[RMDB]
RNA sequence: GGGAACGACUCGAGUAGAGUCGAAAAGAUAUGGACCGUAUGAAAGACGAUGGCAGGCGUUGAAACAGUGAAGCUCGGAAACGAGCUUCACUGUGGAGCCUGCAUCGGGGAGUACGGUCCUAAGUCACGAUUAUUAACUGUUCGCAGUUAAUAAUCGAAAAGAAACAACAACAACAAC
Reactivity to DMS in 0.01 (KOAc 150mM, MgCl2 10mM, bicine 150mM(pH8.5), 24C), signal-to-noise 2, nucleotides 027 to 126: g020a060u000a300u010g010g000a020c010c000g000u010a000u010g000a230a130a270g000a140c010g000a030u000g000g020c000a000g010g020c020g000u000u020g000a250a140a010c000a000g010u000g020a110a040g060c000u000c000g040g020a080a050a260c000g040a040g040c000u000u000c000a000c030u020g000u000g030g010a160g020c000c000u000g030c000a000u000c000g000g000g000g000a300g010u000a000c000g000g010u000c000c000u000a000a040g010u000c050a240
Reactivity to 2A3 in 0.01 (KOAc 150mM, MgCl2 10mM, bicine 150mM(pH8.5), 24C), signal-to-noise 1, nucleotides 027 to 126: g000a000u130a020u130g000g000a000c000c000g040u000a020u060g190a210a130a110g300a050c030g000a000u060g300g130c020a000g000g000c000g300u300u150g060a080a020a000c010a030g000u000g070a050a000g000c000u000c070g140g100a080a070a030c030g010a030g000c000u030u000c020a010c000u020g010u010g010g000a000g020c000c020u010g000c010a010u000c000g000g000g030g000a100g030u020a000c000g000g000u020c000c000u000a010a000g010u020c030a000